Conditions: 150 mM KOAc, 10 mM MgCl2 and 150 mM bicine (pH 8.5), 24 C. This 170-nucleotide RNA was probed chemically with 2A3 and DMS. The data come from the RNA Mapping Database (RMDB), library 15KLIB. Values cover nucleotides 27 to 129.
RNA sequence: GGGAACGACUCGAGUAGAGUCGAAAACGCUUUUCAUACACCAGCAUAUGAUGUGAGUGCAUUCCGUGAUCUGAAACCUUUACCAUUCUUUUAUUAUUCUACUACACCAUGUGAAGUGCAUGGUAAUCCACGAGAGUGUUCGCACUCUCGAAAAGAAACAACAACAACAAC
Reactivity to 2A3 in 0.01 (KOAc 150mM, MgCl2 10mM, bicine 150mM(pH8.5), 24C), signal-to-noise 9, nucleotides 027 to 129: c030g020c010u050u040u050u040c030a040u050a100c040a050c060c020a010g040c040a050u050a050u170g090a050u060g070u020g050a040g020u040g020c010a020u090u040c030c050g040u060g030a050u010c020u040g020a070a080a080c020c000u070u100u070a090c080c030a110u100u070c070u060u200u090u030a130u140u050a130u100u080c050u060a120c020u040a050c030a010c050c010a010u030g030u020g120a230a120g080u090g160c000a000u000g010g000u010a010a040u010c030c020a040
Reactivity to DMS in 0.01 (KOAc 150mM, MgCl2 10mM, bicine 150mM(pH8.5), 24C), signal-to-noise 9, nucleotides 027 to 129: c090g020c050u030u010u020u020c060a080u050a060c020a060c070c030a010g020c080a090u050a060u060g040a070u050g040u000g040a000g040u020g010c000a060u030u040c040c060g000u010g000a040u030c010u000g000a040a070a070c060c050u010u000u000a090c060c060a080u030u040c070u010u010u000u000a100u010u040a040u010u020c050u030a070c100u000a100c150a030c050c030a010u030g030u020g030a090a060g040u010g030c040a010u030g000g000u020a030a060u010c100c080a130